The data come from the RNA Mapping Database (RMDB), library OK1LIB.
Chemical mapping of a 177-nucleotide RNA with DMS and 2A3.
The RNA was probed in 150 mM KOAc, 10 mM MgCl2 and 150 mM bicine (pH 8.5) at 24 C.
RNA sequence: GGGAACGACUCGAGUAGAGUCGAAAAGAAGUGGCAGGGACAUGCCCCAAAAGCUCGUUCUAGCAACAUAUGUUUGGCUAGUUCGAGCGAUUAGUCUAGAGGAGCGUCCUCUCGCCUUUUGACGAGAGAUCACGAUUAAUUUCGAUUAAUCGUGAUCAAAAGAAACAACAACAACAAC
Reactivity to DMS in 0.01 (KOAc 150mM, MgCl2 10mM, bicine 150mM(pH8.5), 24C), signal-to-noise 7, nucleotides 027 to 126: g010a070a070g010u030g000g030c040a080g010g010g010a060c050a120u030g010c010c000c010c070a050a080a100a180g000c000u000c010g000u000u000c000u010a010g020c000a040a040c050a210u040a080u050g010u020u000u030g010g010c000u000a000g010u000u000c010g010a010g000c000g000a000u020u020a090g010u020c120u010a080g010a170g000g010a080g010c060g010u010c020c000u000c010u010c060g000c030c010u000u010u010u010g000a070c050g020a070g000a160
Reactivity to 2A3 in 0.01 (KOAc 150mM, MgCl2 10mM, bicine 150mM(pH8.5), 24C), signal-to-noise 9, nucleotides 027 to 126: g090a070a000g090u060g040g000c020a010g010g000g030a040c040a070u200g020c000c000c000c010a000a090a020a010g000c000u000c000g000u000u000c000u000a000g010c020a010a060c030a090u300a080u300g140u110u070u070g130g030c000u000a000g010u000u000c000g000a000g000c000g010a000u000u060a020g070u020c090u080a050g010a100g050g020a110g030c010g010u020c010c000u050c020u030c040g010c000c000u010u040u030u050g050a020c030g020a010g000a020